[RMDB]
RNA sequence: GGGAACGACUCGAGUAGAGUCGAAAACCCAGCUCUUGAUAGAAGAGCUAAUCUCUCUAGGGGCAGUAGAGACCUCACUGGUUUGAUGAUCUUUUCCAUUUAGAAGUUUAACAGGAGAACUAGGAGAGGAAAGGAAGCUACACUGGGGGAAGAUGGGUCAUUGUCAGUAGUUCGCUACUGACAAUGAAAAAGAAACAACAACAACAAC
Reactivity to 2A3 in 0.01 (KOAc 150mM, MgCl2 10mM, bicine 150mM(pH8.5), 24C), signal-to-noise 4, nucleotides 027 to 156: c000c000c010a000g010c000u000c000u070u130g140a260u170a300g230a080a010g000a000g010c000u000a060a100u050c030u000c010u000c030u080a040g000g000g000g030c020a030g020u100a010g020a000g010a070c000c010u000c010a030c020u030g000g050u040u030u060g040a070u030g010a030u050c020u030u110u090u000c100c040a150u120u150u130a090g020a130a030g020u050u140u230a100a060c030a060g140g030a050g050a030a000c000u000a030g020g040a190g010a030g040g000a030a030a000g040g030a070a050g010c020u070a070c130a040c050u030g020g000g000g000g020a030a000g060a040u090g030g020g080
Reactivity to DMS in 0.01 (KOAc 150mM, MgCl2 10mM, bicine 150mM(pH8.5), 24C), signal-to-noise 2, nucleotides 027 to 156: c020c000c040a140g010c010u010c010u000u000g020a190u020a110g030a050a050g010a040g010c000u020a050a080u000c020u000c020u010c010u000a120g010g010g020g040c050a080g020u000a100g000a160g020a110c010c010u000c040a030c040u000g000g030u000u000u000g020a300u010g020a130u010c050u000u000u000u000c050c020a220u000u010u000a090g010a090a130g010u000u000u010a080a230c070a120g020g020a300g000a020a060c040u000a040g010g010a200g020a000g010g000a030a070a100g020g010a130a140g020c060u010a040c040a080c050u000g010g000g030g000g030a030a060g000a090u000g000g010g020
This 207-nucleotide RNA was probed chemically with 2A3 and DMS. The DMS profile rests on 3,535 reads. Conditions: 150 mM KOAc, 10 mM MgCl2 and 150 mM bicine (pH 8.5), 24 C. 2A3 adducts were read by reverse transcription with SuperScript II with manganese.